[RMDB]
RNA sequence: GGGAACGACUCGAGUAGAGUCGAAAAGAUAUGGAGUGAGCAACAGCUGGAAGGUCGGAAACGACCUCCAGACAUGCUCCCUCCUAAGUCAAACUCAUUGAAGAAAGUUCGCUUUCUUCAAUGAGAAGUGUAAGGAUAUCUUCGGAUAUCCUUACACAAAAGAAACAACAACAACAAC
Reactivity to 2A3 in 0.01 (KOAc 150mM, MgCl2 10mM, bicine 150mM(pH8.5), 24C), signal-to-noise 5, nucleotides 027 to 126: g020a000u040a030u110g000g010a000g010u020g010a000g000c010a020a180c060a190g090c020u010g000g040a270a110g060g020u010c000g000g020a060a040a020c010g000a000c000c010u000c000c010a000g040a030c000a010u010g000c000u000c020c000c000u000c000c000u000a060a020g030u010c040a020a020a160c000u000c000a000u000u010g000a000a010g010a020a010a000g030u080u190c290g090c170u000u020u020c000u000u000c000a000a000u000g000a000g000a010a020
Reactivity to DMS in 0.01 (KOAc 150mM, MgCl2 10mM, bicine 150mM(pH8.5), 24C), signal-to-noise 5, nucleotides 027 to 126: g010a020u000a240u010g000g010a010g020u000g000a010g010c000a020a080c290a130g010c010u000g000g010a060a060g010g010u000c000g010g000a060a060a150c000g000a000c000c010u000c000c010a010g000a100c100a110u000g000c000u000c000c060c000u000c000c010u000a010a050g010u000c030a130a100a210c000u000c000a000u000u000g000a000a000g020a010a010a010g000u000u020c280g010c000u000u000u010c000u000u000c000a000a000u000g000a000g000a020a070